[RMDB]
RNA sequence: GGGAACGACUCGAGUAGAGUCGAAAAAAUGUUCUGUUCGCAGAACAUUAAGCUCGUGUCCCGACCAGGCUGGAUGUCAGUACACGAAGUGCCAGAUCGGGAAUGCCUCCGGCUUCGGCCGGAGGAACCCAUUCAACAUUUUCGAAUGUUGAAUGGGAAAAGAAACAACAACAACAAC
Reactivity to DMS in 0.01 (KOAc 150mM, MgCl2 10mM, bicine 150mM(pH8.5), 24C), signal-to-noise 2, nucleotides 027 to 126: a030a000u020g000u000u000c000u000g000u000u000c190g040c000a010g000a000a010c000a000u000u000a040a190g010c030u000c040g010u010g000u000c010c010c010g010a030c020c020a060g000g020c000u000g020g020a160u010g030u010c160a130g000u000a090c080a050c020g000a160a120g010u020g000c000c010a060g000a030u000c030g000g010g000a050a050u020g000c000c010u010c000c010g000g000c010u000u010c200g010g010c000c020g000g010a020g010g010a030a050
Reactivity to 2A3 in 0.01 (KOAc 150mM, MgCl2 10mM, bicine 150mM(pH8.5), 24C), signal-to-noise 4, nucleotides 027 to 126: a000a000u010g000u000u020c000u000g020u020u050c250g010c090a000g000a010a000c000a000u000u020a040a010g040c010u010c060g150u130g080u090c000c010c010g000a010c010c040a050g020g030c030u060g040g100a270u090g090u170c120a100g170u280a080c040a020c070g070a140a050g100u050g110c010c010a020g020a110u040c020g000g010g030a030a020u060g040c000c000u000c010c010g020g000c020u050u080c210g090g000c000c000g010g000a000g000g010a000a000